[RMDB]
An RNA of 177 nucleotides, treated with 2A3 and DMS and read out base by base.
RNA sequence: GGGAACGACUCGAGUAGAGUCGAAAAGAGGAUUCAACGAGCUUCGUAGCAACGAUAGCAACGUAGCUUUUGCUACGACCCAAGCUAUCGAGGGCAGCUACGUCCCAUGCUCGAGGGGAGAAUCCGACAUAUGGUCAGGAUUCGUCCUGACCAUAUGAAAAGAAACAACAACAACAAC
Reactivity to 2A3 in 0.01 (KOAc 150mM, MgCl2 10mM, bicine 150mM(pH8.5), 24C), signal-to-noise 9, nucleotides 027 to 126: g140a040g000g000a010u010u010c040a100a060c050g010a010g010c010u060u050c020g020u030a000g000c020a040a060c010g010a010u000a000g000c010a040a060c010g010u000a000g000c020u080u170u230u300g000c000u010a010c010g100a110c030c030c000a040a020g000c000u010a000u020c000g020a140g020g130g040c070a060g010c040u030a010c010g030u050c020c030c020a040u130g000c000u010c010g020a070g020g060g030g000a110g010a010a000u010c000c000g010a000
Reactivity to DMS in 0.01 (KOAc 150mM, MgCl2 10mM, bicine 150mM(pH8.5), 24C), signal-to-noise 9, nucleotides 027 to 126: g020a200g010g010a030u000u000c020a140a170c040g010a050g000c010u000u010c020g020u000a000g020c010a150a170c040g010a010u000a010g000c010a110a170c010g010u000a000g010c000u000u000u010u010g010c000u000a000c010g000a100c150c130c140a120a140g010c000u000a010u000c000g010a100g010g010g020c230a130g000c030u000a010c020g000u000c100c080c100a110u010g010c010u000c010g000a100g010g000g000g010a160g010a030a020u000c000c000g010a210
Conditions: 150 mM KOAc, 10 mM MgCl2 and 150 mM bicine (pH 8.5), 24 C. 2A3 adducts were read by reverse transcription with SuperScript II with manganese. The data come from the RNA Mapping Database (RMDB), library OK2TRN.